[RMDB]
An RNA of 207 nucleotides, treated with 2A3 and read out base by base.

RNA sequence: GGGAACGACUCGAGUAGAGUCGAAAACUUCUCAGAAUCCAGCGAGAGGCGUGGAGAGAGGGCCGCGGUGCUCUGGAGUAGAGGCUCUGCCUUCGAAACACCAUCGAUCGUCCCUUCUUCUUUACCUUCUUCUGGCUCUUCCGAUGAGACGCGACCGGUACUGUACGGUGUUCGCACCGUACAGUACAAAAGAAACAACAACAACAAC
Reactivity to 2A3 in 0.01 (KOAc 150mM, MgCl2 10mM, bicine 150mM(pH8.5), 24C), signal-to-noise 2, nucleotides 027 to 156: c010u020u020c000u010c010a020g030a040a060u300c010c000a080g000c070g050a000g000a020g020g020c170g030u010g020g000a020g010a000g000a000g010g000g000c010c000g060c010g000g010u000g000c000u010c000u010g030g010a010g000u010a020g000a010g010g000c020u060c190u300g060c030c010u190u210c010g020a000a000a010c010a020c060c000a000u000c000g030a300u010c000g000u020c000c000c000u030u090c030u060u030c000u010u010u030a020c000c000u010u060c000u000u020c000u000g000g000c000u000c000u010u010c010c020g080a060u120g010a000g010a020c090g000c120g210a060c020c040g030
The 2A3 profile rests on 1,374 reads. Reactivities are given for positions 27 through 156. The data come from the RNA Mapping Database (RMDB), library VIROID.